This 177-nucleotide RNA was probed chemically with DMS. The reactions ran in a buffer of 150 mM KOAc, 10 mM MgCl2 and 150 mM bicine (pH 8.5), at 24 C.
[RMDB]
RNA sequence: GGGAACGACUCGAGUAGAGUCGAAAAGGGGUUAGCGUUUGCAAAACGCUGUUAUUGCAAUGAACUGGAUUUAGCGCAAGUAGGUCCGAAAUCCAGAUCAACAUUUCGGACCUCCGCGCUAAUAAAACGUACCCGAUGGUUUCGACCAUCGGGUACGAAAAGAAACAACAACAACAAC
Reactivity to DMS in 0.01 (KOAc 150mM, MgCl2 10mM, bicine 150mM(pH8.5), 24C), signal-to-noise 1, nucleotides 027 to 126: g020g050g000g010u000u000a020g020c020g010u010u010u040g000c190a000a050a000a000c010g000c060u000g000u030u000a070u000u000g000c100a040a060u000g000a130a060c130u020g040g000a180u000u000u000a030g030c000g010c020a080a130g050u000a010g010g040u000c000c000g020a000a000a000u000c140c130a110g000a030u000c140a100a080c300a040u000u000u010c000g020g010a010c000c000u000c080c100g010c010g000c000u000a000a010u010a030a050a050a100